[RMDB]
RNA sequence: GGGAACGACUCGAGUAGAGUCGAAAACAAAGGUAGAAAGAUACAAGUAAGUUGGGGGAAAGUGUCAGGAUGGCCAAAUAAGAACAGCUCUGGUCUGCAGUUCCCAGUGAGACCAAUGCAGAAGGCAUCUCACCAGAUUGUUCGCAAUCUGGUGAGAAAAAGAAACAACAACAACAAC
Reactivity to DMS in 0.01 (KOAc 150mM, MgCl2 10mM, bicine 150mM(pH8.5), 24C), signal-to-noise 2, nucleotides 027 to 126: c120a050a100a120g000g020u030a120g000a090a030a040g020a110u000a060c100a060a050g010u000a100a070g020u000u000g000g000g000g010g000a080a030a110g020u000g030u000c030a070g040g000a020u010g000g000c030c060a000a020a120u030a060a060g010a090a080c120a100g010c050u020c100u000g020g000u000c010u000g010c040a070g000u010u000c000c010c020a130g000u000g000a040g000a030c020c010a050a050u000g000c080a050g010a070a080g000g000c110a170

The data come from the RNA Mapping Database (RMDB), library OK2TRN. This 177-nucleotide RNA was probed chemically with DMS. DMS adducts were read by reverse transcription with MarathonRT.